[RMDB]
RNA sequence: GGGAACGACUCGAGUAGAGUCGAAAAGAUAUGGAGCGUCUAAGAGUGAUGACCCUAGUCCGAUCGGAAACGAUCGGAGCUAGGCAAGCUCUGCGCUCCUAAGUCAAAACAGCACUUCGGUGCUGAAGUGACGUAUUUGGUUCGCCAAAUACGUCACAAAAGAAACAACAACAACAAC
Reactivity to DMS in 0.01 (KOAc 150mM, MgCl2 10mM, bicine 150mM(pH8.5), 24C), signal-to-noise 2, nucleotides 027 to 126: g030a040u010a300u000g000g020a000g010c010g010u000c170u040a060a090g000a000g030u030g010a090u020g000a180c300c000c010u000a010g000u000c000c000g010a020u000c000g000g000a120a060a250c000g010a000u000c010g000g000a040g000c010u000a000g000g010c020a030a160g000c000u010c000u000g000c000g000c000u000c000c000u000a020a090g000u000c010a050a080a120a190c010a000g000c000a010c000u000u020c170g000g000u000g000c000u000g000a020a130
Reactivity to 2A3 in 0.01 (KOAc 150mM, MgCl2 10mM, bicine 150mM(pH8.5), 24C), signal-to-noise 2, nucleotides 027 to 126: g020a040u050a010u210g030g030a020g040c020g030u090c290u300a190a060g040a000g030u040g120a300u290g110a210c000c040c000u000a000g020u000c000c010g010a030u000c000g010g070a060a030a040c020g000a000u010c000g010g010a010g000c000u000a000g000g000c000a140a000g000c000u000c010u020g020c000g000c000u000c000c000u000a030a000g030u000c000a000a040a090a150c000a010g030c010a020c000u090u180c300g190g000u010g010c000u000g010a070a050
Structure probing data (DMS and 2A3) for a 177-nucleotide construct.
Source: RMDB library TTRDES, as collected in RNAgym.
The 2A3 profile rests on 2,620 reads.
The RNA was probed in 150 mM KOAc, 10 mM MgCl2 and 150 mM bicine (pH 8.5) at 24 C.